[RMDB]
An RNA of 177 nucleotides, treated with DMS and 2A3 and read out base by base. For DMS the reverse transcriptase was MarathonRT. The RNA was probed in 150 mM KOAc, 10 mM MgCl2 and 150 mM bicine (pH 8.5) at 24 C. For 2A3 the reverse transcriptase was SuperScript II with manganese. As a SHAPE reagent, 2A3 marks flexible, mostly unpaired nucleotides at the ribose 2'-OH.
RNA sequence: GGGAACGACUCGAGUAGAGUCGAAAACGUGUGUCUUUCCACCUUUGUCCUCUCUGGGUGGCAUCAAUAUCAAGAAUCAAUCCUCCCAACCGCUUCCGGCUGCUGCGUCCGGGCAAAGCUCGUGACACAUUACAUCAUUCUUCGGAAUGAUGUAAUGAAAAGAAACAACAACAACAAC
Reactivity to DMS in 0.01 (KOAc 150mM, MgCl2 10mM, bicine 150mM(pH8.5), 24C), signal-to-noise 9, nucleotides 027 to 126: c140g010u000g010u000g010u000c030u000u000u000c030c020a090c110c040u000u000u000g010u000c020c020u000c050u000c060u010g010g010g020u000g010g010c110a050u000c070a050a070u010a100u000c100a100a100g000a100a080u000c100a070a120u000c040c030u000c020c010c020a080a110c110c060g010c050u000u000c050c030g010g010c030u000g010c060u000g010c070g010u000c020c030g010g000g010c040a050a060a110g010c030u000c040g020u010g010a080c080a190
Reactivity to 2A3 in 0.01 (KOAc 150mM, MgCl2 10mM, bicine 150mM(pH8.5), 24C), signal-to-noise 6, nucleotides 027 to 126: c030g050u070g010u010g020u070c020u020u070u020c020c000a040c010c000u050u060u120g060u070c000c010u040c010u020c040u040g030g010g020u030g050g000c020a040u050c030a030a130u120a040u160c060a120a050g100a200a040u100c050a040a090u050c030c010u010c000c010c000a020a050c020c000g020c000u070u020c020c010g050g000c020u040g010c000u020g020c060g030u000c010c010g000g000g000c020a100a080a010g000c010u020c030g070u060g010a010c020a000